[RMDB]
RNA sequence: GGGAACGACUCGAGUAGAGUCGAAAAGAUAUGGAUAUUGUUUAGGGAGAUUAUGAUCGGAAACGAUCAUUAAUCAUCGAUCUAACUGCAAUAUCCUAAGUCAAACAUCCAACUUCGGUUGGAUGAACCCUAAUCCCAUCUUCGGAUGGGAUUAGGGAAAAGAAACAACAACAACAAC
Reactivity to DMS in 0.01 (KOAc 150mM, MgCl2 10mM, bicine 150mM(pH8.5), 24C), signal-to-noise 2, nucleotides 027 to 126: g030a020u000a260u000g000g010a000u010a010u000u020g020u000u000u010a020g010g030g010a100g010a040u000u000a010u020g020a000u010c000g000g010a040a020a080c010g030a000u030c000a010u000u020a020a020u000c040a300u000c100g020a060u040c050u020a300a300c300u000g000c010a010a020u000a010u000c010c010u000a010a120g010u010c010a150a050a280c030a000u000c000c000a000a020c000u000u000c200g010g000u000u000g000g020a000u010g000a050a130
Reactivity to 2A3 in 0.01 (KOAc 150mM, MgCl2 10mM, bicine 150mM(pH8.5), 24C), signal-to-noise 2, nucleotides 027 to 126: g010a000u040a010u080g010g010a020u000a020u020u030g090u160u300u300a090g010g080g050a250g000a110u010u030a000u040g010a000u000c020g000g000a000a020a020c010g020a000u000c020a000u050u210a010a010u000c020a010u180c090g060a050u020c060u190a010a070c010u050g010c010a000a010u010a010u030c000c000u010a030a000g000u000c000a000a140a090c010a000u000c010c010a010a000c000u070u090c300g190g000u000u010g000g000a010u010g010a030a010